This 177-nucleotide RNA was probed chemically with DMS and 2A3. For 2A3, 7,050 sequencing reads were counted. 2A3 adducts were read by reverse transcription with SuperScript II with manganese. Source: RMDB library OK2TRN, as collected in RNAgym.

RNA sequence: GGGAACGACUCGAGUAGAGUCGAAAAGAAAGGGACCCCUGCCACGGGAGCGUCGGUCAGCACCCGACGCAUAUUUUUUUAUGCCGCUGACACCCCUCGACGCGGCAGGAGGGGUGGUCCCGAAAGAAUAAUAGUCAUAGUUCGCUAUGACUAUUAUAAAAGAAACAACAACAACAAC
Reactivity to DMS in 0.01 (KOAc 150mM, MgCl2 10mM, bicine 150mM(pH8.5), 24C), signal-to-noise 9, nucleotides 027 to 126: g010a100a130a180g010g010g010a040c010c020c020c010u000g010c020c020a090c130g010g000g010a080g010c070g010u000c050g010g010u000c010a100g000c080a170c300c070c070g010a050c120g020c000a000u000a000u000u000u020u020u020u010u000a050u020g010c000c220g010c010u010g000a130c060a120c050c010c070c010u000c040g000a150c080g010c020g010g010c010a020g000g000a090g000g000g010g010u010g010g000u000c000c000c000g010a050a060a090g010a140
Reactivity to 2A3 in 0.01 (KOAc 150mM, MgCl2 10mM, bicine 150mM(pH8.5), 24C), signal-to-noise 3, nucleotides 027 to 126: g030a050a060a010g000g000g000a020c020c000c000c030u040g070c020c020a070c060g090g050g010a070g010c020g010u030c040g020g010u020c040a010g050c030a070c030c090c040g050a050c050g010c020a040u030a030u010u190u010u000u000u010u020a050u030g010c030c020g010c020u000g000a010c010a170c050c040c000c010u030c020g080a090c020g010c030g010g020c000a000g010g010a020g000g060g030g010u050g000g020u000c000c000c000g010a030a030a000g050a020